[RMDB]
RNA sequence: GGGAACGACUCGAGUAGAGUCGAAAAGAUAUGGAUGUUCCUGUUUCUCGUCGAACGCUCUCGGAAACGAGAGCGCGAGAGAUGCAGGAGACAUCCUAAGUCAAACCACGACGUUCGCGUCGUGGAACCUGUGAUAACGGUUCGCCGUUAUCACAGGAAAAGAAACAACAACAACAAC
Reactivity to 2A3 in 0.01 (KOAc 150mM, MgCl2 10mM, bicine 150mM(pH8.5), 24C), signal-to-noise 3, nucleotides 027 to 126: g010a020u120a060u180g000g000a000u010g000u010u030c000c000u000g030u000u080u010c060u010c100g300u020c030g090a300a190c040g000c000u000c000u000c000g030g030a140a090a090c030g000a000g030a010g020c000g000c000g010a000g010a000g020a010u010g000c010a010g000g000a050g010a010c000a000u000c000c010u020a140a020g040u010c070a080a050a130c000c000a010c020g000a010c000g020u050u120c300g000c010g140u010c000g000u010g020g000a010a100
Reactivity to DMS in 0.01 (KOAc 150mM, MgCl2 10mM, bicine 150mM(pH8.5), 24C), signal-to-noise 2, nucleotides 027 to 126: g000a040u010a300u020g000g000a010u000g010u000u000c000c000u020g000u000u000u010c000u000c000g000u000c120g010a140a130c020g000c010u000c000u000c000g000g000a170a090a240c010g010a000g000a010g030c000g010c060g000a090g000a000g010a010u000g000c000a000g010g000a060g000a030c010a000u000c000c000u000a020a070g040u000c030a090a150a240c020c000a000c020g000a010c000g020u000u000c230g010c020g020u000c000g050u000g000g000a030a050
About this RNA: Structure probing data (2A3 and DMS) for a 177-nucleotide construct. 2A3 is a SHAPE reagent: it acylates the 2'-hydroxyl of flexible nucleotides of all four kinds. The reactions ran in a buffer of 150 mM KOAc, 10 mM MgCl2 and 150 mM bicine (pH 8.5), at 24 C. For DMS the reverse transcriptase was MarathonRT.